This 177-nucleotide RNA was probed chemically with DMS and 2A3. Values cover nucleotides 27 to 126. The RNA was probed in 150 mM KOAc, 10 mM MgCl2 and 150 mM bicine (pH 8.5) at 24 C. For 2A3, 768 sequencing reads were counted. DMS adducts were read by reverse transcription with MarathonRT.
RNA sequence: GGGAACGACUCGAGUAGAGUCGAAAAUGAAUGACCCGGAGAUCCAUGUCAUCUGGAGAAGUUAUUGUCCCAGGGAUAUCUGUCAAAGUGUCGUUUGCAUCAGCUUGGAGUUUAACCAGAUGGUGGGCUUUGUGGGGGAUUUCGAUCCCCCACAAAGAAAAGAAACAACAACAACAAC
Reactivity to DMS in 0.01 (KOAc 150mM, MgCl2 10mM, bicine 150mM(pH8.5), 24C), signal-to-noise 2, nucleotides 027 to 126: u020g000a040a080u020g010a250c040c050c000g000g000a300g000a040u010c180c270a040u020g020u010c020a040u060c010u000g000g020a110g000a050a090g000u000u040a040u010u050g000u010c030c030c000a080g000g020g000a030u000a030u020c040u030g020u000c020a020a230a060g020u010g010u000c050g020u000u000u010g000c130a010u010c050a010g000c050u000u000g000g010a090g000u000u040u030a150a200c010c010a030g020a080u010g000g040u000g000g000g030
Reactivity to 2A3 in 0.01 (KOAc 150mM, MgCl2 10mM, bicine 150mM(pH8.5), 24C), signal-to-noise 2, nucleotides 027 to 126: u210g060a030a000u080g000a010c000c000c000g010g030a040g020a040u040c090c040a030u080g050u110c040a040u030c060u000g020g010a170g030a120a010g080u300u200a120u240u130g130u020c010c010c000a010g030g000g010a030u020a070u040c020u100g110u070c020a000a000a100g120u020g050u080c030g030u010u000u160g000c010a040u010c000a060g030c000u030u120g110g050a130g120u150u040u170a070a110c000c030a070g070a060u070g000g020u030g000g000g010